[RMDB]
Overview
An RNA of 177 nucleotides, treated with 2A3 and DMS and read out base by base.
RNA sequence: GGGAACGACUCGAGUAGAGUCGAAAAGAUAUGGAUGUGCUACCCACCUUGGACUCGCCUUGAAGUCGGAAACGAUGGAGCGAGGACAAGAGGCACAUCCUAAGUCAAAGGAGCCUUCGGGCUCCAACAUGUAGCUCGUGUUCGCACGAGCUACAUGAAAAGAAACAACAACAACAAC
Reactivity to 2A3 in 0.01 (KOAc 150mM, MgCl2 10mM, bicine 150mM(pH8.5), 24C), signal-to-noise 2, nucleotides 027 to 126: g110a080u200a150u300g030g000a000u010g000u020g000c000u180a300c000c010c020a010c010c030u000u000g010g000a020c010u010c000g000c000c080u040u060g080a070a000g020u030c030g000g040a120a110a030c020g000a000u050g070g070a070g000c010g010a000g010g030a010c010a000a010g000a020g000g000c000a000c010a020u030c000c000u010a020a010g090u070c060a060a120a170g000g000a000g000c010c000u130u130c300g110g030g000c000u020c010c000a000a010
Reactivity to DMS in 0.01 (KOAc 150mM, MgCl2 10mM, bicine 150mM(pH8.5), 24C), signal-to-noise 2, nucleotides 027 to 126: g000a120u010a140u000g000g000a010u010g040u000g000c020u000a140c040c000c030a300c100c010u000u000g000g000a110c000u000c000g030c030c300u000u000g000a230a080g000u000c010g000g000a070a020a130c000g020a010u000g040g020a060g000c000g000a020g000g010a020c000a000a040g010a070g000g000c000a010c000a000u000c000c000u000a060a110g000u000c090a060a050a180g010g000a000g010c000c010u000u000c170g030g000g000c000u000c010c000a020a060
Background:
The data come from the RNA Mapping Database (RMDB), library TTRDEL. Conditions: 150 mM KOAc, 10 mM MgCl2 and 150 mM bicine (pH 8.5), 24 C.